[RMDB]
RNA sequence: GGGAACGACUCGAGUAGAGUCGAAAAGUCAGCCUUCGUUCUGUAAACGGGGUUGGAUCCGACUCUCAUAGGCUCUCCAACCCAACUCCUACUCAAUACGUCCUCGUCGUACAGAACGGUAACAUGUAAAACGAAGGCUGCUUCGGCAGCCUUCGAAGACUUCAUUCAUCUUCGGAUGAAUGAAGUCAAAAGAAACAACAACAACAAC
Reactivity to 2A3 in 0.01 (KOAc 150mM, MgCl2 10mM, bicine 150mM(pH8.5), 24C), signal-to-noise 1, nucleotides 027 to 156: g080u060c050a020g060c000c020u030u070c030g000u000u000c000u000g020u030a000a000a130c080g020g020g000g000u000u000g010g000a030u210c000c010g070a130c040u060c010u010c110a110u150a250g000g060c010u000c000u000c060c000a000a020c040c020c000a000a000c000u010c000c010u000a070c010u040c070a070a070u070a170c050g060u030c030c060u050c050g070u040c030g000u030a010c010a030g020a040a010c000g000g010u070a080a040c130a070u120g120u280a060a060a000a010c030g010a000a000g000g020c000u000g000c000u000u010c020g100g000c000a000g000c010c000u000u010c000g000a010a000